RNA sequence: GGGAACGACUCGAGUAGAGUCGAAAAGUGGUGAUUGUUUGCGUAGACCACUUUUAUGUACAAAGUGUGCUUAUGAUCAUGUUAUCGCAACACCACAUAAAUUCGUUUUGUCUGUGACACCAUAUGUAUGCAAUACUCCAGACUGUACAGUUAAUGAAUCGUUACGUCGAUUCGUCGACGUAACGAUAAAAGAAACAACAACAACAAC
Reactivity to 2A3 in 0.01 (KOAc 150mM, MgCl2 10mM, bicine 150mM(pH8.5), 24C), signal-to-noise 2, nucleotides 027 to 156: g000u000g000g010u030g050a270u090u220g120u220u120u140g030c030g010u010a050g010a090c000c000a000c000u000u020u000u000a100u040g070u000a040c110a020a030a030g010u010g120u130g060c040u120u230a080u290g120a170u250c120a090u220g170u110u180a030u160c030g000c020a010a000c000a010c000c000a020c010a020u160a050a070a010u130u090c150g040u090u070u030u240g050u000c050u010g200u120g060a090c000a070c060c050a020u090a090u240g140u020a030u060g080c070a120a070u100a100c020u000c000c000a010g060a090c100u000g060u060a010c000a110g010u100u150a150a050u280g090a020
Reactivity to DMS in 0.01 (KOAc 150mM, MgCl2 10mM, bicine 150mM(pH8.5), 24C), signal-to-noise 1, nucleotides 027 to 156: g000u010g010g020u000g030a130u040u000g060u030u000u010g010c130g060u000a030g020a080c000c050a000c010u000u000u000u010a080u020g060u000a110c110a120a030a020g020u000g040u000g000c020u010u000a240u000g010a120u010c050a140u000g030u010u000a070u000c110g000c030a000a080c030a050c000c000a000c060a080u000a060a080a080u000u000c020g060u000u000u010u000g010u010c000u000g020u000g020a050c190a150c080c010a060u000a170u000g010u000a050u030g010c120a090a070u000a010c010u000c030c000a060g000a070c010u010g020u010a060c110a050g010u000u010a070a170u000g010a070
This 207-nucleotide RNA was probed chemically with 2A3 and DMS.
For DMS, 1,627 sequencing reads were counted.
Source: RMDB library OK3TST, as collected in RNAgym.
The RNA was probed in 150 mM KOAc, 10 mM MgCl2 and 150 mM bicine (pH 8.5) at 24 C.